Annotation: This 177-nucleotide RNA was probed chemically with DMS and 2A3. For DMS the reverse transcriptase was MarathonRT. Values are in units of 0.01, from 0 to 300, in steps of 10.
[RMDB]
RNA sequence: GGGAACGACUCGAGUAGAGUCGAAAAAGGACAAAUCCUUAUUUAGUUAUGGUAAACACAUACACGUGACUGCUCAGAAUCAUUUAUUAUCAUAAAUCCGACUAUAUCAUUAACAUUGAAAAACAAACUAGUUAGUGGAGUUCGCUCCACUAACUAGAAAAGAAACAACAACAACAAC
Reactivity to DMS in 0.01 (KOAc 150mM, MgCl2 10mM, bicine 150mM(pH8.5), 24C), signal-to-noise 2, nucleotides 027 to 126: a040g000g030a070c140a050a090a060u010c000c000u010u040a070u050u020u020a070g010u020u020a040u000g000g040u010a010a030a120c190a150c090a050u050a100c070a040c070g000u000g000a140c040u000g000c050u010c070a030g000a130a070u000c080a060u010u000u000a040u020u030a060u040c040a090u000a050a020a130u000c070c050g000a080c150u040a040u040a050u000c080a010u020u010a010a090c090a050u000u010g010a040a100a070a130a050c080a090a060a150
Reactivity to 2A3 in 0.01 (KOAc 150mM, MgCl2 10mM, bicine 150mM(pH8.5), 24C), signal-to-noise 5, nucleotides 027 to 126: a000g050g000a040c090a080a140a070u080c020c020u070u080a190u110u150u100a050g010u040u020a020u040g020g040u080a030a160a010c090a000c020a100u170a060c050a000c140g030u010g060a020c020u030g040c070u030c050a040g090a110a070u070c040a070u090u070u150a150u110u040a030u070c030a010u050a100a040a070u000c000c000g040a020c080u080a040u040a040u240c070a090u150u140a060a040c010a060u030u100g070a030a010a040a040a010c070a030a050a000